[RMDB]
RNA sequence: GGGAACGACUCGAGUAGAGUCGAAAAGAUAUGGACAACUAGUAGCUGCCAGAACUACGUUCGGGAAAAGCAUCGGAAACGAUGCUUUUUCUCUAGCGUGACGCUGGCCGAAAGUUGUCCUAAGUCAGCUAACCUAUUAGUUCGCUAAUAGGUUAGCAAAAGAAACAACAACAACAAC
Reactivity to 2A3 in 0.01 (KOAc 150mM, MgCl2 10mM, bicine 150mM(pH8.5), 24C), signal-to-noise 2, nucleotides 027 to 126: g030a020u100a100u200g000g000a010c000a020a010c000u020a020g200u050a030g100c290u230g030c080c000a040g000a110a040c040u080a020c080g010u010u020c050g000g000g000a000a000a000a000g010c020a000u010c040g040g010a140a060a060c000g000a000u010g000c000u020u000u010u020u000c000u000c000u000a000g000c010g000u000g000a030c210g000c060u000g020g030c020c000g030a020a000a000g000u010u000g000u020c000c000u010a000a000g030u000c020a000
Reactivity to DMS in 0.01 (KOAc 150mM, MgCl2 10mM, bicine 150mM(pH8.5), 24C), signal-to-noise 4, nucleotides 027 to 126: g010a060u010a300u010g010g000a000c000a000a020c000u000a100g020u000a200g010c240u010g000c000c000a010g010a100a090c120u000a020c000g020u000u010c140g000g000g000a000a000a010a000g000c000a000u000c000g000g020a130a090a230c000g010a010u000g000c000u010u010u000u000u000c000u010c020u010a020g000c000g020u000g010a090c300g000c000u000g000g000c020c020g000a130a120a100g000u010u000g010u000c020c000u000a010a080g010u000c060a120

This 177-nucleotide RNA was probed chemically with 2A3 and DMS. For 2A3 the reverse transcriptase was SuperScript II with manganese. The 2A3 profile rests on 5,167 reads.